RNA sequence: GGGAACGACUCGAGUAGAGUCGAAAAUGAAAGAGUUUCCUUUAACCUAAAUGGAAGCAAAGAUCAAGAAUACAACCUUCCCAUAUGGUUGACUUAAUUAUUCCCUAGGUUCCUGGAAGCUAAAAAAUCAUGUGAAGUCAUUCGUGACUUCACAUGAAAAAGAAACAACAACAACAAC
Reactivity to 2A3 in 0.01 (KOAc 150mM, MgCl2 10mM, bicine 150mM(pH8.5), 24C), signal-to-noise 1, nucleotides 027 to 126: u190g040a040a040a090g130a030g000u010u000u000c000c000u000u020u020a010a000c000c000u040a090a140a060u180g000g020a000a030g010c070a150a000a050g060a030u110c030a030a020g070a280a030u120a180c010a040a000c000c020u050u030c000c030c050a050u070a030u140g010g000u000u020g030a020c010u030u030a030a000u070u030a070u070u020c000c010c020u000a010g000g030u000u030c000c000u000g030g010a010a010g000c040u120a100a080a000a000a000a020
Reactivity to DMS in 0.01 (KOAc 150mM, MgCl2 10mM, bicine 150mM(pH8.5), 24C), signal-to-noise 2, nucleotides 027 to 126: u010g000a080a120a140g000a040g030u000u000u000c000c010u000u000u000a020a030c020c010u020a020a080a050u020g000g000a020a030g020c210a070a080a150g000a010u000c050a020a010g000a160a140u020a160c030a000a020c010c010u000u000c070c020c090a100u020a070u000g010g030u020u000g020a050c030u000u010a010a010u000u000a060u000u000c020c000c280u000a010g050g000u000u000c060c040u000g000g010a020a020g020c030u000a000a010a050a100a040a070
Structure probing data (2A3 and DMS) for a 177-nucleotide construct. Conditions: 150 mM KOAc, 10 mM MgCl2 and 150 mM bicine (pH 8.5), 24 C. Source: RMDB library M2PK90, as collected in RNAgym. The DMS profile rests on 1,090 reads. 2A3 adducts were read by reverse transcription with SuperScript II with manganese. Values are in units of 0.01, from 0 to 300, in steps of 10. For 2A3, 1,092 sequencing reads were counted.